RNA sequence: GGGAACGACUCGAGUAGAGUCGAAAAGUUCGCAUGGUGCACUAUUGUGUUAUUAGUAACUAAGUAAGCUUACAAUCGAAAAUGUUUAACGAUAAAAGGGUAAAAUGGUGUAAGACAGUCUGAUACUUUACGGCUUCACGUUUCGACGUGAAGCCAACUCUAGUCGUAAGUUCGCUUACGACUAGAGAAAAGAAACAACAACAACAAC
Reactivity to DMS in 0.01 (KOAc 150mM, MgCl2 10mM, bicine 150mM(pH8.5), 24C), signal-to-noise 2, nucleotides 027 to 156: g000u010u000c040g020c000a150u010g000g000u020g000c060a090c020u000a050u010u000g010u020g000u000u010a050u010u000a090g030u000a060a060c030u010a040a130g020u000a060a150g030c050u000u000a030c040a030a120u000c040g010a060a070a110a100u000g000u000u000u000a040a080c050g030a100u000a030a050a120a080g020g000g000u000a080a070a070a040u000g040g030u000g040u020a050a050g000a070c050a090g020u000c010u000g000a100u000a060c070u000u020u000a100c100g040g000c000u000u000c020a050c010g020u020u000u000c300g040a070c000g020u000g030a030a020g010c020c000a000a020
Reactivity to 2A3 in 0.01 (KOAc 150mM, MgCl2 10mM, bicine 150mM(pH8.5), 24C), signal-to-noise 3, nucleotides 027 to 156: g050u040u070c020g000c060a030u100g060g000u070g030c030a010c020u080a150u130u070g040u000g000u080u000a040u050u030a070g060u060a060a010c030u000a000a080g080u020a080a010g030c020u050u100a040c070a030a040u080c010g070a080a050a040a040u090g050u060u100u070a050a020c010g000a000u070a090a090a000a000g060g000g010u040a020a070a020a090u070g050g000u040g000u030a040a020g010a020c000a030g040u000c040u080g040a030u040a200c030u070u030u040a070c080g000g000c000u000u000c000a000c000g000u020u050u080c190g040a020c000g000u000g000a000a000g020c000c000a000a000
Chemical mapping of a 207-nucleotide RNA with DMS and 2A3. It was measured as part of the RMDB library M2RFPK. The 2A3 profile rests on 1,975 reads. The reactions ran in a buffer of 150 mM KOAc, 10 mM MgCl2 and 150 mM bicine (pH 8.5), at 24 C.